[RMDB]
RNA sequence: GGGAACGACUCGAGUAGAGUCGAAAAAAUGGCUAGACGCUAAGGACAAAAGCGAUAGCUAGCCUGUAAACACCCGUUAAAUCUAAUUAGAUACGUCAAAAAAUCCCAAGAGAACGGCCAUUCUCUUUAUUAUCUUUAUAUUCGUAUAAAGAUAAUAAAAAGAAACAACAACAACAAC
Reactivity to 2A3 in 0.01 (KOAc 150mM, MgCl2 10mM, bicine 150mM(pH8.5), 24C), signal-to-noise 3, nucleotides 027 to 126: a000a000u090g000g010c000u020a010g000a030c000g000c010u040a080a100g150g010a090c090a100a130a050a000g000c010g080a100u050a030g020c000u000a000g000c000c000u010g030u030a040a060a010c050a050c010c020c000g000u010u130a040a080a020u060c050u100a070a110u110u030a030g020a030u050a050c030g020u030c040a040a080a000a010a010a060u050c030c020c010a020a000g040a000g000a080a000c010g030g000c030c000a030u030u010c010u000c000u000u010
Reactivity to DMS in 0.01 (KOAc 150mM, MgCl2 10mM, bicine 150mM(pH8.5), 24C), signal-to-noise 3, nucleotides 027 to 126: a090a050u030g000g000c000u000a000g000a130c020g010c000u000a090a150g010g040a130c180a080a100a110a030g000c010g000a160u020a130g000c000u000a000g000c000c000u000g000u020a110a110a050c090a120c030c010c010g000u020u000a020a030a030u000c050u000a160a100u020u030a100g000a020u010a040c030g010u030c060a000a010a080a040a060a100u010c010c010c020a100a040g000a050g000a070a040c050g000g000c080c060a100u000u000c000u000c000u000u000